[RMDB]
RNA sequence: GGGAACGACUCGAGUAGAGUCGAAAACUUGGUACUGAGCUGGCCGGUGCUGGAGAUGGGCUGGUCAGUCUGGAGGGCAUAAGGACAGGAAGGAUACCGGCACUGAACGUUGUCACUCCUGUGGGGGGACACCUUCGUUUUUCGAAACGAAGGUGUCAAAAGAAACAACAACAACAAC
Reactivity to DMS in 0.01 (KOAc 150mM, MgCl2 10mM, bicine 150mM(pH8.5), 24C), signal-to-noise 1, nucleotides 027 to 126: c080u000u010g000g010u020a120c060u010g010a080g000c030u000g000g010c000c000g020g040u010g010c020u010g020g010a120g000a160u000g000g000g010c020u010g020g020u000c000a030g000u040c010u000g000g000a200g000g000g020c060a040u010a080a070g000g010a030c020a020g000g010a020a070g000g000a040u000a010c020c010g000g020c020a200c260u010g000a090a050c050g000u000u000g000u000c040a040c040u000c000c010u000g010u010g010g010g030g000g020